The data come from the RNA Mapping Database (RMDB), library OK3TST. This 207-nucleotide RNA was probed chemically with 2A3 and DMS. Reactivities are given for positions 27 through 156. The RNA was probed in 150 mM KOAc, 10 mM MgCl2 and 150 mM bicine (pH 8.5) at 24 C.

[RMDB]
RNA sequence: GGGAACGACUCGAGUAGAGUCGAAAAGAGGAGGCGGAGAUAAGAUAUUCCCUAUCGCCGGAACGGAUGAAAGUUCUCCGCAGAGAGAACACGGACAUAGUCGCAACGGGUUAGAAGGAUCGCCGUGACGUUGUCGAGGAACGGGACGGGAAACCCGGUACUGUAAAACAUUCGUGUUUUACAGUACAAAAGAAACAACAACAACAAC
Reactivity to 2A3 in 0.01 (KOAc 150mM, MgCl2 10mM, bicine 150mM(pH8.5), 24C), signal-to-noise 4, nucleotides 027 to 156: g050a020g080g020a020g000g050c050g030g030a060g010a040u170a130a040g050a030u080a090u100u070c020c000c000u040a070u060c050g030c030c000g010g030a040a010c040g010g030a020u040g060a160a040a030g020u030u010c010u010c010c020g070c130a020g030a000g000a000g000a090a010c030a020c090g010g020a010c030a070u150a070g030u070c020g020c070a070a050c040g030g020g000u070u040a060g070a090a030g060g030a040u030c040g020c080c020g000u020g020a020c030g010u020u040g040u090c050g020a040g010g020a020a020c010g000g000g020a000c010g040g000g020a050a040a050c000c020c000g000
Reactivity to DMS in 0.01 (KOAc 150mM, MgCl2 10mM, bicine 150mM(pH8.5), 24C), signal-to-noise 3, nucleotides 027 to 156: g000a130g030g000a080g030g030c020g020g030a060g010a080u000a050a110g010a220u000a140u010u010c030c010c030u000a070u010c030g020c010c010g000g020a100a120c060g030g000a110u010g000a090a100a130g020u000u000c000u010c010c000g030c160a100g010a100g000a060g000a050a030c040a120c060g010g000a100c060a100u000a100g020u000c050g040c050a060a110c020g010g000g020u000u000a090g020a120a110g000g000a090u000c060g010c010c000g020u000g020a080c050g020u000u000g020u000c020g000a170g000g020a080a100c030g000g010g020a100c040g010g010g000a060a040a090c000c020c000g040